[RMDB]
RNA sequence: GGGAACGACUCGAGUAGAGUCGAAAACCGUAUCGGUUCGCCGAUACGGAAAAGUUAAUGCUGCUAACACAGAUCUUAAGCAUGGCGGUGGUAUCGCUGGUGGGACUCCCCAGUUCGCUGGGGAGAACAGCAGAUACCCAUUCGUGGGUAUCUGCUGAAAAGAAACAACAACAACAAC
Reactivity to 2A3 in 0.01 (KOAc 150mM, MgCl2 10mM, bicine 150mM(pH8.5), 24C), signal-to-noise 3, nucleotides 027 to 126: c000c000g000u000a010u000c000g000g070u050u040c120g020c080c000g000a000u000a010c010g000g020a070a080a000a010g060u080u120a080a070u140g030c020u010g000c030u080a120a010c070a010c020a090g050a170u050c040u100u130a070a010g000c040a040u060g040g000c040g020g040u070g080g080u080a030u090c020g010c010u020g040g030u070g020g020g020a050c000u000c000c000c000c000a000g000u010u040c200g010c080u000g000g020g030g000a000g000a010a000
Reactivity to DMS in 0.01 (KOAc 150mM, MgCl2 10mM, bicine 150mM(pH8.5), 24C), signal-to-noise 4, nucleotides 027 to 126: c010c000g010u000a000u000c000g010g010u000u010c270g010c010c000g010a010u000a000c000g000g000a010a020a070a110g010u000u000a060a070u000g000c020u000g000c050u010a080a090c140a110c080a050g000a090u000c070u000u000a070a080g000c040a070u000g000g010c060g020g020u000g000g000u000a060u000c050g020c040u000g010g000u010g010g000g000a290c010u000c010c000c000c000a020g010u000u010c190g020c000u000g010g000g010g000a000g000a020a090